The record gives the reactivity of an RNA of 177 nucleotides to 2A3 and DMS. High 2A3 reactivity points to a flexible backbone, as in loops and unpaired stretches. The 2A3 profile rests on 13,157 reads. For DMS, 5,878 sequencing reads were counted. Values cover nucleotides 27 to 126. For DMS the reverse transcriptase was MarathonRT.
RNA sequence: GGGAACGACUCGAGUAGAGUCGAAAAGAUAUGGAACGAUACAAAAACUCGAAGAACUCGGAAACGAGGGAGAGUGUAUUCGUUCCUAAGUCAAACUAUAAGAUUGCCUUCGGGCAAUCUUAUAGAAGUAACUAACUAUCUUCGGAUAGUUAGUUACAAAAGAAACAACAACAACAAC
Reactivity to 2A3 in 0.01 (KOAc 150mM, MgCl2 10mM, bicine 150mM(pH8.5), 24C), signal-to-noise 2, nucleotides 027 to 126: g020a020u060a040u140g000g000a000a010c010g000a000u020a020c050a030a300a100a230a040c020u040c050g230a300a060g010a110a030c000u000c010g010g030a090a040a030c010g010a010g010g020g000a040g000a000g010u040g000u010a060u100u290c010g000u000u000c000c000u010a060a000g020u000c040a070a040a100c000u010a000u000a000a000g000a000u000u010g010c000c000u040u140c300g020g000g000c000a000a000u010c000u000u000a000u000a000g010a020a010
Reactivity to DMS in 0.01 (KOAc 150mM, MgCl2 10mM, bicine 150mM(pH8.5), 24C), signal-to-noise 5, nucleotides 027 to 126: g010a050u010a300u000g000g010a000a010c000g010a040u010a030c030a080a070a100a210a110c000u000c010g000a100a160g010a140a180c010u000c000g010g000a120a080a180c010g010a010g000g000g010a070g000a020g010u010g000u000a000u010u000c010g010u000u000c000c000u000a010a060g000u000c020a120a090a230c000u000a000u000a000a000g000a000u000u000g000c000c000u000u010c230g020g000g010c000a000a000u000c000u000u000a000u000a000g000a090a110